[RMDB]
RNA sequence: GGGAACGACUCGAGUAGAGUCGAAAAGUAUAUUUAUGUCCAGGGUGAUGUAGCAGGGAAUACGCAGUCUGAAACAAGGACAAGCCACCAUAGAGUCUUGCAUGUCAAAUUCCUCCCUGUGAUCAUCAGAGCUAAUCCCAUUCGUGGGAUUAGCUCUAAAAGAAACAACAACAACAAC
Reactivity to 2A3 in 0.01 (KOAc 150mM, MgCl2 10mM, bicine 150mM(pH8.5), 24C), signal-to-noise 2, nucleotides 027 to 126: g110u060a080u020a050u190u190u060a170u140g050u050c030c000a000g060g180g010u100g000a060u030g050u210a000g000c000a040g020g000g020a040a000u190a110c130g020c050a020g030u000c050u060g080a120a130a000c070a080a000g020g000a000c000a010a040g010c010c010a000c000c000a030u110a110g140a000g050u050c000u000u000g000c000a050u200g040u010c050a020a090a190u110u030c000c000u010c000c000c000u040g010u070g020a000u040c000a020u000c020
Reactivity to DMS in 0.01 (KOAc 150mM, MgCl2 10mM, bicine 150mM(pH8.5), 24C), signal-to-noise 1, nucleotides 027 to 126: g050u020a000u000a050u000u020u000a070u030g010u000c020c000a170g000g000g000u010g000a050u000g070u000a220g070c000a010g000g000g020a150a010u030a110c260g050c050a070g020u000c000u020g000a140a100a000c120a080a200g000g000a030c050a030a180g000c050c110a000c150c000a090u000a200g010a060g000u030c010u000u000g000c090a220u000g050u000c020a050a000a180u000u000c140c030u000c000c000c020u010g000u000g020a130u030c050a000u030c010
This 177-nucleotide RNA was probed chemically with 2A3 and DMS.
It was measured as part of the RMDB library OK1LIB.
For 2A3 the reverse transcriptase was SuperScript II with manganese.
Conditions: 150 mM KOAc, 10 mM MgCl2 and 150 mM bicine (pH 8.5), 24 C.
The DMS profile rests on 1,039 reads.